Chemical mapping of a 177-nucleotide RNA with DMS and 2A3. The reactions ran in a buffer of 150 mM KOAc, 10 mM MgCl2 and 150 mM bicine (pH 8.5), at 24 C. The data come from the RNA Mapping Database (RMDB), library OK2TST. The 2A3 profile rests on 755 reads.

[RMDB]
RNA sequence: GGGAACGACUCGAGUAGAGUCGAAAAUAAGUCAUUAACAUAGAGUGGUCAUGAGCGGAGCGGGUUUCGUUACUUCACCCCUGCAAAGUGCUGUGAUUGUUUAGACCAUGAGAAUCAAAGUCCACUCCUAAUUGUGCGGAUUCGUCCGCACAAUUAGAAAAGAAACAACAACAACAAC
Reactivity to DMS in 0.01 (KOAc 150mM, MgCl2 10mM, bicine 150mM(pH8.5), 24C), signal-to-noise 2, nucleotides 027 to 126: u020a090a060g010u010c070a060u000u000a060a130c080a070u000a080g000a100g030u000g000g020u000c060a110u000g000a150g010c040g020g000a300g010c090g010g020g000u000u010u010c140g010u010u000a050c080u010u000c060a020c030c090c050c010u000g020c180a040a120a130g030u000g030c070u000g000u000g000a040u000u000g010u040u010u000a080g000a090c030c050a060u010g000a140g020a070a080u030c090a040a080a140g010u010c010c000a000c030u000c030
Reactivity to 2A3 in 0.01 (KOAc 150mM, MgCl2 10mM, bicine 150mM(pH8.5), 24C), signal-to-noise 1, nucleotides 027 to 126: u190a050a000g020u040c070a140u080u160a050a020c000a030u100a050g040a030g060u050g010g020u030c020a020u030g050a000g000c030g060g020a030g000c040g010g080g040u050u010u140c010g030u020u100a040c020u030u060c000a070c000c090c000c000u030g060c030a100a050a000g030u060g090c080u080g010u080g010a050u170u040g020u080u120u030a020g000a000c010c050a070u100g020a000g100a160a060u080c060a100a000a030g060u040c020c030a000c000u040c010
Overview: For DMS the reverse transcriptase was MarathonRT.